[RMDB]
RNA sequence: GGGAACGACUCGAGUAGAGUCGAAAAGAAAGAAAGAAAUUAGCUCGCCAGUUUGCGAGGUCUGUCCCCACACGACAGAUAAUCGGGUGCAACUCCCGCCCCUUUUCCGAGGGUCAUCGGAACCAAAAAAACUCAGGCAACUUCGGUUGCCUGAGAAGAUACAAACUCACUUCGGUGAGUUUGUAUCAAAAGAAACAACAACAACAAC
Reactivity to 2A3 in 0.01 (KOAc 150mM, MgCl2 10mM, bicine 150mM(pH8.5), 24C), signal-to-noise 1, nucleotides 027 to 156: g010a000a100a020g100a040a130a010g030a060a160a090u170u050a070g060c000u010c030g000c010c040a180g130u120u210u180g020c000g000a010g000g020u000c000u000g020u040c000c040c000c050a060c000a010c060g030a020c000a010g040a020u030a040a060u100c010g000g010g000u030g000c000a010a000c030u010c000c000c010g000c000c000c000c000u070u200u010u000c000c010g010a000g020g000g020u050c060a000u010c000g000g000a010a010c040c010a000a100a070a050a000a000a020c000u000c030a000g000g000c010a000a000c000u060u040c140g100g000u010u010g000c000c000u010g000a000g000a000a000